[RMDB]
RNA sequence: GGGAACGACUCGAGUAGAGUCGAAAACAAUAAUUUCCGAAGAUGUAGCAUUGGAAUCAGCUUUAAUGUGCUUUGCUGCAAAUGUGCCGCCAAUUUUCGACAACGUUGAUCCAGCUUUAUUUGGUCACGGACUACUCAUGUUCGCAUGAGUAGUCCGAAAAGAAACAACAACAACAAC
Reactivity to DMS in 0.01 (KOAc 150mM, MgCl2 10mM, bicine 150mM(pH8.5), 24C), signal-to-noise 1, nucleotides 027 to 126: c100a110a090u010a080a110u000u000u000c000c000g000a090a050g010a070u020g010u000a060g010c000a120u000u010g000g000a030a090u000c080a070g040c140u000u020u020a080a130u000g030u010g000c020u000u010u000g010c070u030g000c000a040a090a050u000g000u000g000c010c000g010c040c060a020a070u010u000u000u000c030g030a070c070a110a170c130g000u000u010g010a060u020c010c030a070g010c100u020u040u040a090u000u000u000g050g010u000c130a140
Reactivity to 2A3 in 0.01 (KOAc 150mM, MgCl2 10mM, bicine 150mM(pH8.5), 24C), signal-to-noise 1, nucleotides 027 to 126: c000a000a080u190a140a100u060u080u030c010c050g000a010a030g060a050u100g020u080a000g020c040a060u000u190g020g120a120a030u070c060a010g000c020u010u160u130a190a040u190g040u010g040c000u140u040u010g000c010u000g000c000a040a000a090u210g010u100g000c010c000g000c000c000a030a060u030u080u050u000c010g010a030c030a080a040c080g040u020u080g000a040u050c010c000a040g000c030u200u100u180a120u070u120u090g110g020u060c080a000
This 177-nucleotide RNA was probed chemically with DMS and 2A3. For DMS, 825 sequencing reads were counted. DMS adducts were read by reverse transcription with MarathonRT. 2A3 adducts were read by reverse transcription with SuperScript II with manganese. Source: RMDB library OK2TST, as collected in RNAgym.